An RNA of 207 nucleotides, treated with 2A3 and read out base by base. The 2A3 profile rests on 930 reads. Conditions: 150 mM KOAc, 10 mM MgCl2 and 150 mM bicine (pH 8.5), 24 C.
RNA sequence: GGGAACGACUCGAGUAGAGUCGAAAAAAGAACCUCGCAAUGAGGUAAGGUGGGACUUUUCCUUCUGGAACCAAGCGGUUGGUUCCGAGGGGGGUGUGAUCCAGUUACCGCCGUAGAAACUGGGUUACGACGUCCUACCCGGGAUUCCAAACCCGGUGUUAACAGCUUGGUUCGCCAAGCUGUUAACAAAAGAAACAACAACAACAAC
Reactivity to 2A3 in 0.01 (KOAc 150mM, MgCl2 10mM, bicine 150mM(pH8.5), 24C), signal-to-noise 1, nucleotides 027 to 156: a000a000g080a020a050c010c000u020c010g100c180a150a300u300g010a000g000g010u020a090a060g010g000u000g000g020g000a000c010u110u120u030u060c030c000u040u000c060u150g000g000a000a000c010c000a010a010g040c000g070g050u010u000g000g040u000u000c000c000g020a030g000g000g020g000g000g030u200g000u000g000a000u000c000c000a000g000u000u020a030c010c000g020c040c030g070u090a040g060a050a100a000c000u000g000g020g000u030u000a030c090g050a020c070g090u000c000c000u000a010c000c010c000g000g010g010a040u250u080c080c030a040a040a060c000c010c000g000g030u030